[RMDB]
RNA sequence: GGGAACGACUCGAGUAGAGUCGAAAAGGAUUUUAUUUUACUAUAAGUGCAUGUCAGUAAAUAAUACAAUAACUGCUGGUAUACUUUGGUGCUAUUGCCUUAAUUUGUACCAUAGUAUCUGCAGUUUUACCCACCAUUGCUUUUGCACCUCCAUGCAAUGAUAUGAUCGAUUCGUCGAUCAUAUCAUAAAAGAAACAACAACAACAAC
Reactivity to 2A3 in 0.01 (KOAc 150mM, MgCl2 10mM, bicine 150mM(pH8.5), 24C), signal-to-noise 7, nucleotides 027 to 156: g030g010a040u040u070u050u030a090u020u100u050u040a080c030u070a070u080a300a090g020u030g040c020a020u040g030u130c090a010g010u020a020a030a030u060a020a030u090a070c060a060a070u080a140a010c000u000g030c030u090g070g040u150a010u000a030c000u000u030u010g000g000u010g000c010u040a040u080u100g110c040c040u130u180a140a120u130u160u100g000u010a000c010c000a000u000a010g000u000a000u010c010u020g000c000a000g000u000u000u000u020a000c000c000c000a010c030c040a110u060u140g030c040u060u100u110u150g010c010a050c000c020u040c040c040a050u090g030c020a040
Reactivity to DMS in 0.01 (KOAc 150mM, MgCl2 10mM, bicine 150mM(pH8.5), 24C), signal-to-noise 3, nucleotides 027 to 156: g020g020a130u000u000u010u000a030u010u010u010u000a050c020u000a260u010a080a100g020u000g010c040a050u000g010u010c110a040g020u000a030a020a040u000a030a100u000a110c090a100a110u000a020a030c000u000g000c010u010g060g040u010a030u000a030c010u000u000u000g010g050u000g010c010u000a040u010u010g030c230c160u010u000a030a070u000u000u000g040u010a020c010c010a000u000a030g030u010a010u000c020u000g010c000a000g020u000u000u000u000a110c040c020c000a100c070c040a300u000u000g000c000u000u000u000u000g010c010a130c070c020u000c040c020a030u000g030c130a110